Chemical mapping of a 177-nucleotide RNA with DMS and 2A3. Conditions: 150 mM KOAc, 10 mM MgCl2 and 150 mM bicine (pH 8.5), 24 C. Reactivities are given for positions 27 through 126. For 2A3 the reverse transcriptase was SuperScript II with manganese.

[RMDB]
RNA sequence: GGGAACGACUCGAGUAGAGUCGAAAAGAUAUGGAGCGAUGUGGACAUGCUGGGGUGUCGGAAACGACACCGACAGCAACAGCCACACGUCGCUCCUAAGUCAAACGACACCGUUCGCGGUGUCGAAGAAUCUAUGAUGCUUCGGCAUCAUAGAUUCAAAAGAAACAACAACAACAAC
Reactivity to DMS in 0.01 (KOAc 150mM, MgCl2 10mM, bicine 150mM(pH8.5), 24C), signal-to-noise 3, nucleotides 027 to 126: g000a010u000a300u020g000g000a020g030c000g030a010u010g020u000g010g020a040c100a300u010g040c000u000g000g000g000g010u000g010u010c000g040g000a050a070a110c010g010a000c000a010c010c000g000a090c040a020g010c000a060a080c260a130g000c070c080a170c000a020c030g000u000c000g020c000u010c000c000u000a000a040g000u010c020a080a130a230c000g010a010c010a000c000c000g030u010u010c250g040c030g020g010u000g030u020c010g020a030a110
Reactivity to 2A3 in 0.01 (KOAc 150mM, MgCl2 10mM, bicine 150mM(pH8.5), 24C), signal-to-noise 2, nucleotides 027 to 126: g000a010u020a040u100g000g000a010g000c010g030a030u020g030u010g000g020a060c190a300u300g000c000u000g000g000g000g010u000g000u000c000g020g000a000a040a010c010g000a000c000a010c000c000g020a050c010a010g000c010a050a050c060a050g040c030c010a030c000a010c020g030u000c020g000c020u000c000c000u000a000a000g010u000c050a080a050a110c010g000a010c010a010c030c000g000u060u080c300g020c010g130g000u010g000u010c000g000a010a020